RNA sequence: GGGAACGACUCGAGUAGAGUCGAAAAGCACGGCCUUGAGCCGGGCGAGGAGUAUGCGGGGGCUGAAGGGCUUGGUGAUGUAGUCGUCGGCCCCGAGCUCCAGGCCCACCACCACGUCGGUCUCCUCACCUACCUGGCAAUUCGUUGCCAGGUAGGUAAAAGAAACAACAACAACAAC
Reactivity to 2A3 in 0.01 (KOAc 150mM, MgCl2 10mM, bicine 150mM(pH8.5), 24C), signal-to-noise 2, nucleotides 027 to 126: g010c020a000c000g030g000c010c000u120u260g050a060g060c000c000g000g010g010c000g000a100g010g010a020g020u220a060u300g300c080g080g020g010g020g040c020u020g020a080a050g060g040g020c020u110u110g030g100u110g100a170u200g100u160a030g020u020c060g000u010c020g050g020c000c000c000c000g010a000g020c000u000c010c010a010g090g010c000c010c000a050c020c010a020c020c020a050c050g070u070c040g050g020u000c030u020c020c000u030c010
Reactivity to DMS in 0.01 (KOAc 150mM, MgCl2 10mM, bicine 150mM(pH8.5), 24C), signal-to-noise 2, nucleotides 027 to 126: g000c040a030c060g030g020c000c030u000u000g000a160g070c020c000g010g000g000c000g010a100g040g000a010g030u000a040u010g000c070g020g000g000g000g040c030u000g000a090a100g010g010g020c010u000u020g050g000u010g000a110u010g000u010a030g000u000c040g010u000c040g000g000c050c000c000c000g010a080g000c020u000c000c020a200g000g000c000c000c020a110c100c050a090c080c070a080c160g030u000c040g020g010u000c000u000c000c040u000c180